[RMDB]
RNA sequence: GGGAACGACUCGAGUAGAGUCGAAAAGUGCUGCAAAGGCUAAAACUAAGUUAAAGGCUUUAAGAGAAGUUAUCUCAUCUGCUAAAGAGCAAGCUGAGGCUUUAACUCAGGGAACUGAUAUUCCUGCCACCCACGGAUUGUUCGCAAUCCGUGGGUGAAAAGAAACAACAACAACAAC
Reactivity to 2A3 in 0.01 (KOAc 150mM, MgCl2 10mM, bicine 150mM(pH8.5), 24C), signal-to-noise 3, nucleotides 027 to 126: g020u030g040c000u040g000c130a100a080a230g010g000c020u090a000a000a000a090c030u040a020a000g010u040u060a040a060a000g070g000c010u010u110u300a200a090g110a050g010a080a000g030u080u300a300u060c000u030c010a090u010c010u010g000c000u030a170a220a070g270a160g020c000a120a010g000c030u000g020a000g030g000c000u040u000u000a010a000c020u020c060a050g050g010g010a010a100c020u030g020a080u040a090u180u000c000c000u010g070c080
Reactivity to DMS in 0.01 (KOAc 150mM, MgCl2 10mM, bicine 150mM(pH8.5), 24C), signal-to-noise 1, nucleotides 027 to 126: g040u010g000c080u010g010c300a030a070a170g010g020c020u020a050a080a130a140c010u080a030a000g010u000u000a000a030a020g000g010c010u000u000u000a120a180g000a110g000a040a120g020u010u010a140u030c000u000c040a010u020c010u020g000c030u050a030a090a020g000a010g000c000a060a040g030c130u000g000a010g000g030c020u010u000u000a010a030c000u030c060a030g100g000g000a070a100c110u000g010a050u010a110u000u010c000c050u000g030c250
Chemical mapping of a 177-nucleotide RNA with 2A3 and DMS. The 2A3 profile rests on 1,468 reads. 2A3 adducts were read by reverse transcription with SuperScript II with manganese. The DMS profile rests on 1,484 reads. Conditions: 150 mM KOAc, 10 mM MgCl2 and 150 mM bicine (pH 8.5), 24 C. DMS adducts were read by reverse transcription with MarathonRT.